Structure probing data (DMS and 2A3) for a 177-nucleotide construct. The reactions ran in a buffer of 150 mM KOAc, 10 mM MgCl2 and 150 mM bicine (pH 8.5), at 24 C. Values cover nucleotides 27 to 126.
RNA sequence: GGGAACGACUCGAGUAGAGUCGAAAACUCAAUCACCAUGCCUGACCUAAAGCUGUACUAAAGAGCAAUUUGUGAUAAAAACUGCAUGGUACUGGUAUAGCUACAGACAAGUAGACCAAUGGAAUAAAAAAUCCAUACCAUUCGUGGUAUGGAUUUUAAAAGAAACAACAACAACAAC
Reactivity to DMS in 0.01 (KOAc 150mM, MgCl2 10mM, bicine 150mM(pH8.5), 24C), signal-to-noise 4, nucleotides 027 to 126: c010u020c010a150a120u020c100a070c060c050a060u000g020c010c030u010g010a120c130c070u010a080a130a090g000c010u010g020u000a020c040u010a070a110a100g000a130g000c010a030a040u000u000u010g010u000g010a090u020a090a060a050a030a020c090u000g000c010a080u010g020g000u000a100c120u000g010g000u010a020u000a010g020c010u000a110c130a040g000a060c130a020a100g010u010a060g010a040c090c090a070a050u000g000g020a100a060u050a000a020
Reactivity to 2A3 in 0.01 (KOAc 150mM, MgCl2 10mM, bicine 150mM(pH8.5), 24C), signal-to-noise 2, nucleotides 027 to 126: c020u030c000a030a070u100c030a030c040c030a010u060g000c010c050u070g070a150c000c010u090a120a100a010g000c010u010g080u040a030c010u130a130a170a060g070a060g000c030a030a050u060u030u040g080u100g110a060u260a100a220a000a020a040c010u010g000c040a020u100g080g000u050a010c050u010g000g040u030a040u010a110g000c020u030a010c030a030g100a080c010a130a090g080u020a010g070a000c000c020a000a070u140g050g070a050a070u180a230a170